[RMDB]
RNA sequence: GGGAACGACUCGAGUAGAGUCGAAAAGUUGGAAAAACUUAUCUCUACUGCUCGUGAUGGCGUAAGGCGAGGCGAUAACUUCCAUAGUGUCUUAACAACAUUCAUUGACGCAGCACGAGGCCCCGCAAGAGUGAUAUGUUCGCAUAUCACAAAAGAAACAACAACAACAAC
Reactivity to 2A3 in 0.01 (KOAc 150mM, MgCl2 10mM, bicine 150mM(pH8.5), 24C), signal-to-noise 9, nucleotides 027 to 129: g010u010u010g080g050a090a070a010a010a010c010u030u030a090u050c000u000c010u040a070c020u010g020c000u000c010g020u020g020a040u040g030g020c050g030u030a010a010g030g010c040g040a050g030g060c060g040a070u070a190a100c060u100u030c030c020a070u070a100g170u140g010u050c000u040u080a130a080c040a030a010c000a050u090u180c010a010u040u300g010a020c090g000c010a000g010c020a010c110g000a010g010g000c000c000c000c000g030c050a120a120g080a020
Reactivity to DMS in 0.01 (KOAc 150mM, MgCl2 10mM, bicine 150mM(pH8.5), 24C), signal-to-noise 9, nucleotides 027 to 129: g010u000u010g040g050a080a060a060a020a010c030u000u000a100u010c020u010c000u020a180c050u000g000c000u000c040g030u000g000a000u020g010g010c250g000u000a000a020g010g020c040g010a080g020g060c200g020a070u020a130a110c110u030u000c050c040a160u040a080g030u010g010u000c020u010u040a090a060c130a050a160c020a030u000u050c050a020u000u010g000a020c130g050c020a030g030c050a040c160g020a050g000g000c080c010c000c020g020c120a090a070g000a110
The data come from the RNA Mapping Database (RMDB), library 15KLIB.
An RNA of 170 nucleotides, treated with 2A3 and DMS and read out base by base.
The 2A3 profile rests on 111,989 reads.
DMS adducts were read by reverse transcription with MarathonRT.
The RNA was probed in 150 mM KOAc, 10 mM MgCl2 and 150 mM bicine (pH 8.5) at 24 C.